This 207-nucleotide RNA was probed chemically with 2A3. The RNA was probed in 150 mM KOAc, 10 mM MgCl2 and 150 mM bicine (pH 8.5) at 24 C.

[RMDB]
RNA sequence: GGGAACGACUCGAGUAGAGUCGAAAAAAGAAAUGUAGCCAUCGUGACAAAAAACAAUAUCACACGCUGAGUGAUAUUUCAGUAAAACUUCCUUUGCUUUUAAUACUUCAUCACCAGCCCCACCAAUUAAUCCUACCCGUAGUUUUUUACGUGUGAAGGUAGUGUGUAACUUCGGUUACACACUACCAAAAGAAACAACAACAACAAC
Reactivity to 2A3 in 0.01 (KOAc 150mM, MgCl2 10mM, bicine 150mM(pH8.5), 24C), signal-to-noise 2, nucleotides 027 to 156: a000a030g040a000a020a040u060g000u010a010g020c050c000a030u010c010g040u040g090a080c140a010a110a030a080a050a020c100a060a090u100a060u070c100a070c000a010c100g010c060u170g020a110g140u000g010a000u010a030u070u080u190c030a010g060u050a050a070a070a070c000u030u040c010c000u070u050u050g010c020u110u100u120u170a100a130u130a180c030u080u040c010a060u040c000a000c090c000a010g030c030c010c000c000a020c000c000a040a000u040u040a110a000u040c020c000u010a010c040c000c000g020u010a000g060u000u000u100u000u220u050a010c010g010u010g000u010g060a020a020